[RMDB]
RNA sequence: GGGAACGACUCGAGUAGAGUCGAAAAGAUAUGGAAAUAUACAAGCAACAGCCGUCAUGUCGGAAACGACAUACGGACAUGCUUGGUAUUUCCUAAGUCAAAACUCCGCAGGUUCGCCUGCGGAGAACUAUUCACAAUCGUUCGCGAUUGUGAAUAGAAAAGAAACAACAACAACAAC
Reactivity to DMS in 0.01 (KOAc 150mM, MgCl2 10mM, bicine 150mM(pH8.5), 24C), signal-to-noise 2, nucleotides 027 to 126: g000a020u010a050u020g000g010a020a010a000u000a000u010a110c000a030a020g020c010a140a080c250a130g020c000c010g010u000c300a010u010g000u000c010g030g000a010a040a040c000g030a000c000a010u010a000c000g010g000a000c040a210u020g010c010u000u000g000g000u000a000u010u000u000c000c000u000a000a060g010u000c000a130a120a140a140c010u000c000c000g020c000a010g000g000u000u020c290g030c000c010u000g000c000g000g000a000g000a000a100
Reactivity to 2A3 in 0.01 (KOAc 150mM, MgCl2 10mM, bicine 150mM(pH8.5), 24C), signal-to-noise 2, nucleotides 027 to 126: g020a000u030a000u060g010g010a030a040a000u040a020u110a300c000a040a000g000c140a170a090c090a300g030c010c010g060u120c170a010u010g010u000c000g020g000a020a010a010c010g000a010c010a000u010a000c030g020g020a000c030a110u300g000c000u000u010g000g010u010a000u000u000u000c000c010u010a000a020g010u000c010a030a020a100a300c010u010c000c010g000c000a000g060g040u100u190c300g110c100c020u000g000c000g010g000a000g010a010a010